[RMDB]
RNA sequence: GGGAACGACUCGAGUAGAGUCGAAAAAGUGCUGGGAGGUCAAGCAAGGAAGGGAGCCUGCCAGGAGAUGGGAAGGAGGCCUGGGCACUGUGGUGGCCCAGAGGCCAGGGGGAGUGUUUCCAGAGAGGGAACAGUCAACCAAGCUGGCCACUGCUUACUAUUAUGCGGUAUUCGUACCGCAUAAUAGAAAAGAAACAACAACAACAAC
Reactivity to DMS in 0.01 (KOAc 150mM, MgCl2 10mM, bicine 150mM(pH8.5), 24C), signal-to-noise 1, nucleotides 027 to 156: a080g000u030g030c040u000g010g030g040a060g020g020u000c040a050a180g000c080a070a180g060g000a150a080g030g020g020a090g030c080c010u000g000c050c020a070g000g000a070g000a140u000g020g020g000a040a060g010g000a070g000g040c110c010u010g010g020g050c020a040c060u000g020u010g020g080u000g010g000c000c010c040a080g010a090g000g020c010c040a090g020g010g000g030g000a090g020u000g000u010u000u010c020c010a180g020a190g010a300g000g000g000a020a000c000a040g010u000c030a050a060c020c000a070a150g000c050u000g020g000c010c020a040c060u000g000c050u010u000a220
Reactivity to 2A3 in 0.01 (KOAc 150mM, MgCl2 10mM, bicine 150mM(pH8.5), 24C), signal-to-noise 3, nucleotides 027 to 156: a010g110u100g010c030u040g020g020g020a060g020g030u050c060a050a020g020c060a070a030g040g020a020a030g040g020g010a010g030c030c030u050g050c050c020a030g030g010a070g010a020u120g040g020g020a040a040g040g020a010g010g000c010c000u020g000g000g040c020a010c060u070g050u110g150g090u080g000g030c020c010c000a040g040a040g030g000c020c010a010g020g000g000g020g000a060g050u040g000u010u040u000c030c010a070g090a000g020a110g240g010g010a010a000c010a020g160u030c020a020a120c050c010a060a000g090c020u020g010g000c020c000a010c030u060g000c000u020u060a040
An RNA of 207 nucleotides, treated with DMS and 2A3 and read out base by base.
The reactions ran in a buffer of 150 mM KOAc, 10 mM MgCl2 and 150 mM bicine (pH 8.5), at 24 C.
It was measured as part of the RMDB library OK3TST.
Reactivities are rounded to 0.1 and cut off at 0 and 3.
The DMS profile rests on 2,484 reads.
Values cover nucleotides 27 to 156.